The record gives the reactivity of an RNA of 207 nucleotides to 2A3 and DMS. For DMS, 7,164 sequencing reads were counted.

RNA sequence: GGGAACGACUCGAGUAGAGUCGAAAAGACGCGGAUGGCCUCGAUCUCCUGAGCCGCGCUCACCUUACGGCGCUGCAGUUCCGGAUCGUCAUACUGACGCACCGUAAUCACCUCUGACUGACGGGUCUGCGUCGAGAUGAUCUUCAGCAGAUCCACCCACCUUGCAAUAAUUCGUUAUUGCAAGGUGAAAAGAAACAACAACAACAAC
Reactivity to 2A3 in 0.01 (KOAc 150mM, MgCl2 10mM, bicine 150mM(pH8.5), 24C), signal-to-noise 8, nucleotides 027 to 156: g050a010c030g010c020g040g040a090u090g100g040c020c050u070c050g070a160u050c050u040c090c040u070g050a010g020c000c010g000c010g010c030u050c030a120c010c020u070u130a060c070g010g000c020g010c030u060g000c030a050g010u090u090c080c030g040g060a180u100c040g080u040c050a090u090a240c070u120g030a030c020g010c020a030c020c010g020u030a040a060u090c020a070c070c040u130c090u140g090a170c030u070g030a050c080g000g000g020u030c050u020g000c000g030u050c050g010a030g000a050u260g030a050u030c000u040u040c040a020g000c000a000g000a010u000c010c000a020c020c010
Reactivity to DMS in 0.01 (KOAc 150mM, MgCl2 10mM, bicine 150mM(pH8.5), 24C), signal-to-noise 3, nucleotides 027 to 156: g040a090c030g020c000g000g020a070u010g000g010c050c030u000c020g010a130u010c040u000c000c040u010g020a190g030c000c020g010c000g000c050u010c040a110c090c100u000u010a080c060g020g010c030g020c000u000g000c000a090g000u010u000c070c030g060g020a100u000c050g030u000c030a150u000a120c080u000g020a060c020g010c030a060c020c010g020u000a060a070u010c020a070c070c060u000c040u000g010a070c030u000g030a120c030g000g000g020u000c020u000g030c010g040u010c040g010a080g010a140u020g010a100u000c040u000u000c050a090g040c040a060g000a070u000c010c010a080c110c020
For 2A3 the reverse transcriptase was SuperScript II with manganese. Values cover nucleotides 27 to 156. The RNA was probed in 150 mM KOAc, 10 mM MgCl2 and 150 mM bicine (pH 8.5) at 24 C. DMS adducts were read by reverse transcription with MarathonRT.